[RMDB]
RNA sequence: GGGAACGACUCGAGUAGAGUCGAAAAUGAAAAUGGAUGGCGCUAAAGCGGGCUACUUAUACUUUGCCGUUAGCGCGAUAGCAUUUAUAAUGUACGCGUUAAUGAGUAGGAGGGCGUGAAGGUCGUGUCUGGUGGCAUUUUUCGAAAUGCCACCAGAAAAAGAAACAACAACAACAAC
Reactivity to 2A3 in 0.01 (KOAc 150mM, MgCl2 10mM, bicine 150mM(pH8.5), 24C), signal-to-noise 1, nucleotides 027 to 126: u110g010a000a010a000a030u010g000g080a050u070g030g000c010g010c070u160a150a090a000g070c020g010g040g000c020u060a090c000u240u050a010u020a230c060u090u080u010g000c000c020g000u000u000a000g000c000g000c000g000a010u010a000g000c020a020u000u050u060a220u120a120a080u060g070u070a020c020g000c000g010u050u010a000a020u040g040a020g030u020a010g000g090a030g020g000g000c020g000u020g000a020a000g060g000u000c080g030u020g020
Reactivity to DMS in 0.01 (KOAc 150mM, MgCl2 10mM, bicine 150mM(pH8.5), 24C), signal-to-noise 1, nucleotides 027 to 126: u010g000a090a040a060a080u040g010g030a020u000g000g030c040g000c010u000a010a070a070g020c020g000g000g000c000u000a040c080u010u070a080u000a070c140u000u000u010g090c040c020g000u000u000a000g010c000g050c000g000a070u030a190g020c010a000u000u000u060a150u010a030a000u020g050u000a020c010g050c000g000u000u000a010a010u000g010a130g040u010a060g000g000a020g000g010g000c000g000u000g040a120a090g000g010u000c040g000u000g000